[RMDB]
RNA sequence: GGGAACGACUCGAGUAGAGUCGAAAACGACGUAGGUAAACGUGCUGUUGUCUAUGAUAAGUUUACAGACAAUAUUCUCAUGGAAUUAGCUUUAUUUGUCGGAUUGAUUCAUAUGGCUCUGGGCAUGGUGUUAGUUACAAUUCGUUGUAACUAACACAAAAGAAACAACAACAACAAC
Reactivity to DMS in 0.01 (KOAc 150mM, MgCl2 10mM, bicine 150mM(pH8.5), 24C), signal-to-noise 9, nucleotides 027 to 126: c070g010a100c110g010u010a080g010g010u000a050a060a120c060g020u000g020c080u000g010u000u000g010u000c020u000a050u000g000a090u000a080a100g010u000u000u000a090c090a110g010a030c020a030a050u000a050u000u000c030u000c100a110u010g020g000a070a080u000u000a060g010c100u000u000u000a060u010u000u000g010u000c030g000g000a080u010u000g010a110u000u010c050a040u000a050u000g010g010c010u000c060u000g000g000g010c050a050u000g010
Reactivity to 2A3 in 0.01 (KOAc 150mM, MgCl2 10mM, bicine 150mM(pH8.5), 24C), signal-to-noise 9, nucleotides 027 to 126: c040g100a010c040g040u090a050g090g110u130a100a120a030c030g020u040g030c030u050g010u090u030g010u000c010u020a050u040g050a060u040a100a070g050u070u070u080a080c060a030g030a010c010a030a010u030a050u120u030c040u020c040a090u140g070g030a070a100u100u020a060g040c050u090u130u080a100u090u130u090g020u010c020g040g010a060u030u080g040a040u080u020c020a010u040a050u160g020g000c010u000c030u080g080g010g010c020a020u060g080
Structure probing data (DMS and 2A3) for a 177-nucleotide construct.
The DMS profile rests on 21,806 reads.
The reactions ran in a buffer of 150 mM KOAc, 10 mM MgCl2 and 150 mM bicine (pH 8.5), at 24 C.